Overview: Structure probing data (2A3 and DMS) for a 177-nucleotide construct. Conditions: 150 mM KOAc, 10 mM MgCl2 and 150 mM bicine (pH 8.5), 24 C. DMS adducts were read by reverse transcription with MarathonRT. Reactivities are given for positions 27 through 126.
RNA sequence: GGGAACGACUCGAGUAGAGUCGAAAACGACAAUUUGGUAUGGAGGACGGCGACUUUGGUCACAACAUUCUCAUGAUCCUCAUCCAAAUAGCGAUAUUCAAGGUUCUGUCCUACUUUACGCUGAAGAGUGCUCCGAUAAUUUCGAUUAUCGGAGCACAAAAGAAACAACAACAACAAC
Reactivity to 2A3 in 0.01 (KOAc 150mM, MgCl2 10mM, bicine 150mM(pH8.5), 24C), signal-to-noise 1, nucleotides 027 to 126: c020g080a050c050a170a040u020u030u070g070g010u240a060u070g090g020a000g050g000a010c020g060g110c090g030a020c030u080u050u210g040g030u140c020a000c010a050a100c020a020u100u000c040u000c020a040u120g100a140u010c000c000u000c000a000u010c020c000a040a000a000u050a030g030c010g040a070u010a050u080u140c060a070a010g040g030u070u080c020u060g070u060c010c000u050a120c000u070u180u080a040c010g000c030u040g000a070a020g060a020
Reactivity to DMS in 0.01 (KOAc 150mM, MgCl2 10mM, bicine 150mM(pH8.5), 24C), signal-to-noise 1, nucleotides 027 to 126: c090g010a160c090a060a030u000u000u000g010g010u000a000u010g060g000a030g000g000a030c050g010g050c180g000a010c060u010u000u000g000g010u000c200a050c130a090a130c160a100u000u000c090u000c040a200u010g000a210u010c000c000u020c000a010u040c000c010a030a020a010u000a090g000c060g030a160u000a070u000u000c150a060a040g000g010u000u010c170u000g010u040c040c000u000a090c170u000u050u030a020c070g000c010u000g010a050a110g040a190